[RMDB]
Background
Structure probing data (2A3 and DMS) for a 177-nucleotide construct. Reactivities are rounded to 0.1 and cut off at 0 and 3. The 2A3 profile rests on 9,941 reads. For 2A3 the reverse transcriptase was SuperScript II with manganese. The reactions ran in a buffer of 150 mM KOAc, 10 mM MgCl2 and 150 mM bicine (pH 8.5), at 24 C.

RNA sequence: GGGAACGACUCGAGUAGAGUCGAAAACAAGUUUUGGAACACCUGCUAAAAUCAUGCAAUAUUUCUGUGGUCUUCUGAGUCAGGCUUUAUGCAAUGGCCUUUCAAUCAUGGCAUUUCCUACUUUAGCCACCGUAUCAUUUUUCGAAAUGAUACGGUGAAAAGAAACAACAACAACAAC
Reactivity to 2A3 in 0.01 (KOAc 150mM, MgCl2 10mM, bicine 150mM(pH8.5), 24C), signal-to-noise 6, nucleotides 027 to 126: c030a020a080g040u040u060u130u150g050g020a050a030c020a040c030c010u040g030c050u090a070a060a050a120u110c050a040u100g030c020a050a100u040a120u160u140u040c050u040g070u070g050g000u000c010u040u030c020u070g040a030g040u030c020a010g040g030c010u070u110u060a050u090g010c040a040a070u040g030g020c010c000u020u100u060c050a030a060u050c020a030u040g030g000c010a010u010u000u020c000c010u030a120c030u120u110u070a040g020c010
Reactivity to DMS in 0.01 (KOAc 150mM, MgCl2 10mM, bicine 150mM(pH8.5), 24C), signal-to-noise 6, nucleotides 027 to 126: c060a100a110g010u010u000u000u000g010g010a070a070c080a060c050c020u000g020c060u000a060a050a080a060u010c110a050u000g010c090a090a080u010a070u000u000u000c060u000g020u010g010g000u000c060u000u000c050u010g010a090g020u000c070a050g010g010c040u000u000u000a060u010g020c060a060a070u000g010g000c070c030u000u000u000c110a070a060u010c060a040u000g000g010c050a050u000u000u000c010c010u000a100c130u000u000u010a120g010c140